[RMDB]
RNA sequence: GGGAACGACUCGAGUAGAGUCGAAAAUUAAACCUCUGUCCUUUAUAAAUAACCCAGUCUGAGGCAGUUCUUUAUAGCAGCGUGAGAAUGGACUAAUACACCUCCCUUCUUGAGUCUGGAAGAAUAUGUGAAGGGAGAUUGCUAAGGACUUAUUUAAGAUAGUGCAUGCUUUCGAGCAUGCACUAUCAAAAGAAACAACAACAACAAC
Reactivity to 2A3 in 0.01 (KOAc 150mM, MgCl2 10mM, bicine 150mM(pH8.5), 24C), signal-to-noise 2, nucleotides 027 to 156: u060u010a110a070a050c030c010u040c160u060g060u060c030c050u050u230u020a170u070a080a090a150u060a100a090c000c060c000a000g100u000c030u090g010a000g020g000c010a010g010u020u090c040u090u100u020a260u050a050g080c080a030g000c020g030u070g020a020g070a060a000u100g040g030a010c060u060a050a110u090a160c060a050c000c000u000c020c000c010u050u070c010u050u040g010a070g100u050c030u010g030g020a000a040g020a050a000u300a220u300g070u020g020a020a000g000g030g000a000g000a000u000u120g030c000u030a010a040g000g000a030c030u080u010a060u190u250u230a040a010
This 207-nucleotide RNA was probed chemically with 2A3. For 2A3 the reverse transcriptase was SuperScript II with manganese. Reactivities are rounded to 0.1 and cut off at 0 and 3. It was measured as part of the RMDB library OK3TST.